Background:
Structure probing data (DMS and 2A3) for a 177-nucleotide construct. It was measured as part of the RMDB library OK2TRN. The DMS profile rests on 42,478 reads. Values cover nucleotides 27 to 126. The RNA was probed in 150 mM KOAc, 10 mM MgCl2 and 150 mM bicine (pH 8.5) at 24 C.
RNA sequence: GGGAACGACUCGAGUAGAGUCGAAAAAGCUUGUCAUGGCGCUACGUGCGAUAGCCGACGACAUUGAGGCCCGGGGCACUGACGUAGUGGGAAAGUGGCGGCUGUGAGCGCGGUUGACGCGGCGACGCUGUUAUAUCAGUUUCGACUGAUAUAACAGAAAAGAAACAACAACAACAAC
Reactivity to DMS in 0.01 (KOAc 150mM, MgCl2 10mM, bicine 150mM(pH8.5), 24C), signal-to-noise 9, nucleotides 027 to 126: a070g010c040u000u010g020u000c020a070u000g010g000c050g010c020u000a020c040g010u000g020c050g010a120u000a080g020c010c010g010a270c140g010a060c060a090u010u010g010a130g010g000c030c040c030g010g010g010g010c050a060c070u000g010a080c080g010u000a040g030u000g010g010g010a060a080a100g020u000g010g010c020g010g010c020u000g010u000g010a120g020c030g020c010g000g010u010u000g000a110c050g020c030g010g010c040g010a070c140g010
Reactivity to 2A3 in 0.01 (KOAc 150mM, MgCl2 10mM, bicine 150mM(pH8.5), 24C), signal-to-noise 9, nucleotides 027 to 126: a000g060c080u170u150g020u040c020a070u140g130g000c020g010c020u030a020c030g080u100g140c030g110a120u090a060g000c010c010g060a140c020g020a030c060a080u080u250g090a090g000g070c010c030c050g000g000g020g000c060a050c080u040g030a030c040g020u030a020g040u080g030g040g050a070a170a070g040u040g040g010c000g000g000c010u010g030u070g080a090g020c030g000c030g020g050u070u140g040a050c030g000c000g040g050c030g000a010c040g010